[RMDB]
Chemical mapping of a 177-nucleotide RNA with DMS and 2A3.
RNA sequence: GGGAACGACUCGAGUAGAGUCGAAAAGGUACAGCGGACAUGCCCCACUUGUGCAGCAAUGUACAUGCCUUUCCCUUGCUCCCAGGUAUGGGAGGGAGGAUGGGCUCAAUGGGUUCUUUGAGGCGGACGGAAGUUCCAAGUUCGCUUGGAACUUCCGAAAAGAAACAACAACAACAAC
Reactivity to DMS in 0.01 (KOAc 150mM, MgCl2 10mM, bicine 150mM(pH8.5), 24C), signal-to-noise 2, nucleotides 027 to 126: g000g010u010a070c090a060g010c020g000g020a140c090a120u000g000c210c010c020c060a110c160u010u010g030u000g010c030a010g000c270a080a070u000g000u000a010c010a070u010g000c020c000u000u000u000c140c020c000u010u000g000c000u000c010c010c010a040g020g020u000a100u000g000g000g000a000g010g000g030a040g000g000a040u000g000g000g020c010u010c190a070a120u000g010g000g030u000u010c030u000u000u010g000a140g010g000c080g000g030a140
Reactivity to 2A3 in 0.01 (KOAc 150mM, MgCl2 10mM, bicine 150mM(pH8.5), 24C), signal-to-noise 2, nucleotides 027 to 126: g050g020u150a110c050a030g010c000g000g080a020c010a090u120g050c010c000c000c000a010c040u070u020g000u020g000c010a010g000c030a010a160u020g010u020a010c010a050u110g000c010c020u030u100u110c020c010c010u000u030g120c000u010c020c000c010a030g260g070u220a210u180g020g000g000a000g000g000g030a010g000g000a010u050g000g070g020c020u000c010a020a050u100g040g010g020u080u010c050u080u080u070g060a050g060g000c040g060g020a010
The 2A3 profile rests on 1,401 reads. The reactions ran in a buffer of 150 mM KOAc, 10 mM MgCl2 and 150 mM bicine (pH 8.5), at 24 C.